[RMDB]
The data come from the RNA Mapping Database (RMDB), library M2RFOK.
The record gives the reactivity of an RNA of 207 nucleotides to 2A3.
Reactivities are rounded to 0.1 and cut off at 0 and 3.
For 2A3, 933 sequencing reads were counted.
Conditions: 150 mM KOAc, 10 mM MgCl2 and 150 mM bicine (pH 8.5), 24 C.
Reactivities are given for positions 27 through 156.
RNA sequence: GGGAACGACUCGAGUAGAGUCGAAAACAAGUUCGUGCUUGCGACUUACACGUAGGGCGAGGGGUGGGCGAAAGUUGCCAUGAGACCGUAACUUUCGUAGUCAUUGAUAAAGGUGCAGGUCUCGCUCAAAACCUCCCGUGGUUCGCCACGGGAGGAACUGUGCUUAUGUCUUCGGACAUAAGCACAGAAAAGAAACAACAACAACAAC
Reactivity to 2A3 in 0.01 (KOAc 150mM, MgCl2 10mM, bicine 150mM(pH8.5), 24C), signal-to-noise 2, nucleotides 027 to 156: c050a000a010g040u120u150c020g010u050g070c040u070u130g040c040g130a080c060u120u130a030c100a020c050g080u060a060g000g000g000c070g040a100g000g040g000g030u170g000g030g000c020g000a010a000a000g010u000u000g020c070c090a080u150g030a000g000a020c000c030g000u030a020a010c020u000u030u030c020g030u000a020g080u010c040a050u020u220g090a050u130a120a030a020g070g000u040g040c040a000g000g020u010c000u010c010g000c000u120c100a010a070a030a050c010c000u000c000c010c000g010u000g000g010u020u030c160g030c080c000a010c000g000g000g000a000g000g000a000a010
For 2A3 the reverse transcriptase was SuperScript II with manganese.